[RMDB]
RNA sequence: GGGAACGACUCGAGUAGAGUCGAAAACGCUCAUAAAGCAUCUCGGGCAACACGAUCCGCCGGUCGAAGAUGCGCGGACGAUUCUGGUAGGCGAUGCGCAGGGCGUCGCCGAAACCGCGGGUGAUCAGGUAAGAUGCAUGUUCGCAUGCAUCUUACCAAAAGAAACAACAACAACAAC
Reactivity to DMS in 0.01 (KOAc 150mM, MgCl2 10mM, bicine 150mM(pH8.5), 24C), signal-to-noise 2, nucleotides 027 to 126: c130g000c010u010c060a170u000a080a090a130g030c010a050u000c020u000c030g020g000g000c080a080a080c130a100c100g000a060u000c030c050g050c060c050g000g010u000c090g020a080a070g000a070u010g000c060g010c040g010g000a090c080g020a150u010u010c080u010g040g000u000a110g000g010c000g010a000u000g020c060g010c140a110g000g030g020c000g010u010c010g030c010c000g000a040a090a070c050c030g010c070g000g010g020u000g010a080u010c140a180
Reactivity to 2A3 in 0.01 (KOAc 150mM, MgCl2 10mM, bicine 150mM(pH8.5), 24C), signal-to-noise 2, nucleotides 027 to 126: c030g000c010u040c070a100u150a120a140a000g010c000a050u020c010u040c030g000g000g030c040a110a040c020a020c140g080a130u040c010c030g040c000c020g070g040u090c050g070a130a050g040a090u120g060c050g000c000g020g000a040c030g070a080u170u030c020u120g040g000u010a040g000g000c000g010a010u010g040c100g020c170a160g040g280g000c000g000u010c000g000c000c020g000a010a010a000c000c000g000c030g020g020g010u060g030a090u070c050a030